[RMDB]
RNA sequence: GGGAACGACUCGAGUAGAGUCGAAAAGCGUACUACCUAGCGGGAAAGUGGAGCAUCGAUCGUAUAGAAGGCUUUCCCAAAUAGGAAAGCUGGUAUACGGGAGCUCCAUAACACGCUAGGUAUCGCAAACUGCUAUCUGGUUCGCCAGAUAGCAGAAUGGAUGAUUAUUGUUCGCAAUAAUCAUCCAAAAAGAAACAACAACAACAAC
Reactivity to 2A3 in 0.01 (KOAc 150mM, MgCl2 10mM, bicine 150mM(pH8.5), 24C), signal-to-noise 4, nucleotides 027 to 156: g000c000g010u060a060c020u000a010c010c000u000a010g010c010g000g030g080a100a170a150g050u010g000g000a000g000c000a290u240c040g090a080u070c010g010u000a000u020a020g110a140a030g060g000c040u000u000u030c050c050c060a140a220a100u270a030g000g000a000a000a000g000c020u050g010g170u020a000u000a000c010g020g040g000a000g000c010u000c030c000a000u000a010a010c010a000c000g000c010u010a000g000g000u000a000u000c000g000c000a000a050a060c000u000g000c000u000a000u010c010u000g030g040u050u070c140g090c060c000a000g010a000u000a000g010c000a000g000a000a010
Reactivity to DMS in 0.01 (KOAc 150mM, MgCl2 10mM, bicine 150mM(pH8.5), 24C), signal-to-noise 2, nucleotides 027 to 156: g010c020g030u010a040c080u000a010c010c000u000a020g020c010g010g000g030a050a080a250g040u000g000g020a060g030c000a270u000c110g020a040u010c000g020u000a020u000a030g000a300a300g010g000c000u000u000u000c000c010c010a010a100a110u010a050g000g000a020a000a020g050c020u000g000g010u010a010u000a000c040g000g010g020a100g040c000u010c000c010a010u000a030a300c040a040c000g010c040u000a010g010g020u010a000u000c010g050c020a040a070a160c000u000g030c000u000a020u000c000u010g000g020u010u000c300g030c000c000a020g000a010u010a000g000c000a000g000a020a090
Annotation:
Source: RMDB library RNAMAK, as collected in RNAgym. The record gives the reactivity of an RNA of 207 nucleotides to 2A3 and DMS. For 2A3, 4,108 sequencing reads were counted.